RNA sequence: GGGAACGACUCGAGUAGAGUCGAAAAUGGUCACAUAACUGAGAGGCCAGAGUGUUCAACGGGAUAUCAACAUGAAUACAGGCACUGAGGUGGAAAAGAAGGAUACAGAAUUUUCACUGAAGGAAAGGGGAAUUAGGAAGGUGGUAGACUGUAGCAACAAAGUAACCACAUUCGUGUGGUUACUUUGAAAAGAAACAACAACAACAAC
Reactivity to 2A3 in 0.01 (KOAc 150mM, MgCl2 10mM, bicine 150mM(pH8.5), 24C), signal-to-noise 8, nucleotides 027 to 156: u070g010g010u040c030a030c020a150u170a220a060c080u080g050a050g010a030g130g000c020c010a020g010a020g040u080g010u040u100c060a090a060c080g030g020g020a050u060a040u170c050a040a090c020a090u080g030a030a000u090a040c030a050g050g000c050a010c080u040g020a020g020g030u040g020g020a030a070a010a030g070a030a020g040g020a030u060a130c030a010g080a050a040u060u030u030u100c040a050c020u040g040a050a010g030g010a040a030a040g020g010g010g010a020a050u080u030a060g000g030a070a020g010g010u020g000g000u010a020g010a020c030u030g030u060a020g070c010a020a070
Reactivity to DMS in 0.01 (KOAc 150mM, MgCl2 10mM, bicine 150mM(pH8.5), 24C), signal-to-noise 4, nucleotides 027 to 156: u000g010g020u010c040a080c070a130u000a080a140c060u000g000a120g020a140g010g030c020c010a080g000a110g000u000g010u000u010c040a080a090c070g000g000g020a200u000a090u000c050a030a060c060a060u000g000a070a080u000a060c050a110g000g040c040a110c040u000g010a240g010g030u000g010g000a020a030a020a120g010a140a060g020g000a160u000a200c090a110g020a100a140u000u000u000u000c030a080c040u010g020a130a100g040g010a030a050a110g000g010g030g010a000a090u000u000a070g000g000a060a060g000g020u010g020g020u000a070g010a090c030u000g020u000a080g020c050a060a150
An RNA of 207 nucleotides, treated with 2A3 and DMS and read out base by base. For 2A3 the reverse transcriptase was SuperScript II with manganese. DMS adducts were read by reverse transcription with MarathonRT.